This 177-nucleotide RNA was probed chemically with DMS and 2A3. Conditions: 150 mM KOAc, 10 mM MgCl2 and 150 mM bicine (pH 8.5), 24 C. For DMS, 2,704 sequencing reads were counted.
[RMDB]
RNA sequence: GGGAACGACUCGAGUAGAGUCGAAAACAGGAGCCGCACCAGCGGGUGGUCGGGUUCGGUGCCGGCGCGGCGCAGCAGUGCCAACCCGCGCUCGGCGUCGCCGCGAUCGGAGGCGAUGCGGGCCAGGCGGCUUGUUCUAUUUCGAUAGAACAAGCCGAAAAGAAACAACAACAACAAC
Reactivity to DMS in 0.01 (KOAc 150mM, MgCl2 10mM, bicine 150mM(pH8.5), 24C), signal-to-noise 2, nucleotides 027 to 126: c050a110g020g010a140g010c000c010g020c040a100c060c100a130g020c000g010g000g000u000g000g010u000c000g000g000g010u000u060c090g020g040u000g060c000c000g020g020c000g000c000g020g000c040g030c300a180g000c120a110g010u000g000c010c010a110a300c210c020c000g010c020g000c000u010c030g080g000c020g020u000c000g000c300c020g010c030g030a040u030c030g010g040a300g000g030c010g010a040u000g000c010g000g010g000c010c010a110g000g020
Reactivity to 2A3 in 0.01 (KOAc 150mM, MgCl2 10mM, bicine 150mM(pH8.5), 24C), signal-to-noise 3, nucleotides 027 to 126: c070a070g070g010a020g180c000c020g000c000a030c010c020a070g040c040g000g040g080u130g010g010u030c000g010g000g000u210u180c040g000g000u010g000c000c000g000g000c010g000c000g010g000c080g000c040a050g030c020a050g130u080g160c040c010a030a010c010c000c000g000c000g010c050u130c060g010g000c000g000u000c000g000c000c000g240c010g040a020u020c000g060g050a020g000g040c010g000a010u010g000c000g000g000g000c010c000a060g060g030
Notes: DMS adducts were read by reverse transcription with MarathonRT.